The record gives the reactivity of an RNA of 207 nucleotides to 2A3.
The RNA was probed in 150 mM KOAc, 10 mM MgCl2 and 150 mM bicine (pH 8.5) at 24 C.
Values cover nucleotides 27 to 156.
RNA sequence: GGGAACGACUCGAGUAGAGUCGAAAACAAUAAACUGAUCAUUAUCAGAGGAUAUUGCCCAAUUUCCGCUUUGGGUGGAGUUUUUUGGACUUUAGCUGAGGACUUGUCAUUCGGACUUUUGACUGCCAGCGUGGCAACACACACUGUCCUUUUACUCUCUAAUCCGGAGUUUCGACUCCGGAUUAGAAAAAGAAACAACAACAACAAC
Reactivity to 2A3 in 0.01 (KOAc 150mM, MgCl2 10mM, bicine 150mM(pH8.5), 24C), signal-to-noise 1, nucleotides 027 to 156: c060a000a090u180a190a130a040c010u090g000a080u030c110a160u070u300a030u120c030a030g010a000g060g030a030u070a070u140u200g060c010c000c010a020a100u000u000u090c000c010g070c110u110u050u100g060g080g000u010g080g020a000g110u030u000u080u060u190u300g040g000a010c020u180u100u250a030g010c010u010g090a080g100g000a040c060u010u190g000u140c010a040u050u170c130g090g050a070c010u160u140u290u100g100a090c020u060g020c000c000a040g060c030g030u020g000g000c000a020a040c000a000c000a000c000a000c110u010g000u010c000c000u000u110u000u090a000c000u000c000